[RMDB]
RNA sequence: GGGAACGACUCGAGUAGAGUCGAAAAAGCGCCGAUACGUCGGCGCAUAACAUCCAGCUCACUUUGAAGGCUCGCCUUCUGAAAAAAACCUUUCCUAUACUCUGACAAGUCCGUGUACGCACGGACACCAAUCAGCGCCUUUCGAGGCGCUGAUUGGAAAAGAAACAACAACAACAAC
Reactivity to 2A3 in 0.01 (KOAc 150mM, MgCl2 10mM, bicine 150mM(pH8.5), 24C), signal-to-noise 2, nucleotides 027 to 126: a000g010c020g010c010c020g010a010u030a020c190g090u000c000g000g010c000g000c000a000u000a000a030c030a060u050c040c000a000g000c020u110c030a080c040u200u080u200g050a060a020g000g020c000u050c140g090c030c000u000u110c010u010g010a070a080a000a000a000a010a080c050c020u090u050u020c020c010u130a080u040a200c070u020c000u060g070a020c030a150a100g020u000c000c090g000u000g000u000a010c240g000c170a000c000g000g000a000c020a000